[RMDB]
RNA sequence: GGGAACGACUCGAGUAGAGUCGAAAAUGUGAUGUGUUCGCACAUCACAAACUACCGAGAAUCUUCCUCGGUAUAAAAGAGGAACCCUUCGAAACAAGGGAAUAAGCCCCUGCUUCGGCAGGGGCAAACGCAUUAAAACUUUCGAGUUUUAAUGCGUAAAAGAAACAACAACAACAAC
Reactivity to DMS in 0.01 (KOAc 150mM, MgCl2 10mM, bicine 150mM(pH8.5), 24C), signal-to-noise 4, nucleotides 027 to 126: u000g010u000g000a000u000g020u000g010u000u020c220g020c010a020c000a010u000c010a000c000a010a060a090c080u000a120c010c000g010a050g010a140a160u010c110u000u010c070c000u010c000g020g010u000a010u010a030a030a060a110g000a080g020g000a060a120c000c010c000u000u000c050g000a130a100a140c250a030a010g010g020g010a090a080u010a100a180g000c010c000c010c000u000g020c010u000u000c160g030g000c000a000g020g010g010g020c020a000a010
Reactivity to 2A3 in 0.01 (KOAc 150mM, MgCl2 10mM, bicine 150mM(pH8.5), 24C), signal-to-noise 1, nucleotides 027 to 126: u060g000u020g010a000u010g020u000g030u010u020c140g030c080a010c000a000u000c000a010c000a000a030a020c000u000a000c000c010g000a010g010a070a100u040c060u100u030c040c010u010c000g010g010u060a050u110a090a090a000a000g120a040g090g070a020a060c000c000c020u050u050c060g060a050a040a060c010a060a000g000g000g080a030a040u090a130a010g000c000c000c000c000u010g000c000u000u070c180g070g000c060a030g000g070g000g020c000a000a000
This 177-nucleotide RNA was probed chemically with DMS and 2A3. Values cover nucleotides 27 to 126. The DMS profile rests on 3,177 reads. Conditions: 150 mM KOAc, 10 mM MgCl2 and 150 mM bicine (pH 8.5), 24 C. For 2A3, 1,322 sequencing reads were counted. DMS adducts were read by reverse transcription with MarathonRT.